Chemical mapping of a 177-nucleotide RNA with 2A3 and DMS. For 2A3 the reverse transcriptase was SuperScript II with manganese. For 2A3, 901 sequencing reads were counted. High 2A3 reactivity points to a flexible backbone, as in loops and unpaired stretches.
[RMDB]
RNA sequence: GGGAACGACUCGAGUAGAGUCGAAAAUGCGCCUGCUGUUUUAAGCAAAUCAAACAUCAAGCGGCAAGAAAUAGGCUCACGACCGCGAUGCUUUUUAUCUUGUCUAGAAUAUCCAAGCAACGGGCACGGCCUAUUAGUACUUCGGUACUAAUAGGCCAAAAGAAACAACAACAACAAC
Reactivity to 2A3 in 0.01 (KOAc 150mM, MgCl2 10mM, bicine 150mM(pH8.5), 24C), signal-to-noise 1, nucleotides 027 to 126: u050g000c050g060c030c010u000g010c000u020g130u010u100u010u150a060a030g040c020a000a000a060u060c010a020a050a090c030a090u010c050a000a100g110c060g060g000c010a010a020g020a010a050a000u070a040g010g000c000u020c010a060c040g270a170c030c110g000c090g020a010u080g010c000u050u040u010u030u030a210u080c030u000u020g030u010c010u050a000g060a080a040u080a020u120c060c010a000a000g010c000a010a050c030g000g020g040c060a010c060
Reactivity to DMS in 0.01 (KOAc 150mM, MgCl2 10mM, bicine 150mM(pH8.5), 24C), signal-to-noise 1, nucleotides 027 to 126: u000g000c030g020c000c000u000g030c040u000g010u000u020u010u000a090a050g030c150a030a100a110u010c200a040a100a010c080a030u000c060a050a040g020c120g000g060c010a010a050g010a000a040a090u000a030g010g000c010u010c050a080c120g000a150c200c180g060c040g000a030u000g020c040u040u020u010u000u000a110u010c000u000u010g030u010c100u000a110g010a040a000u010a060u000c060c030a080a050g010c080a030a010c060g030g020g010c110a050c170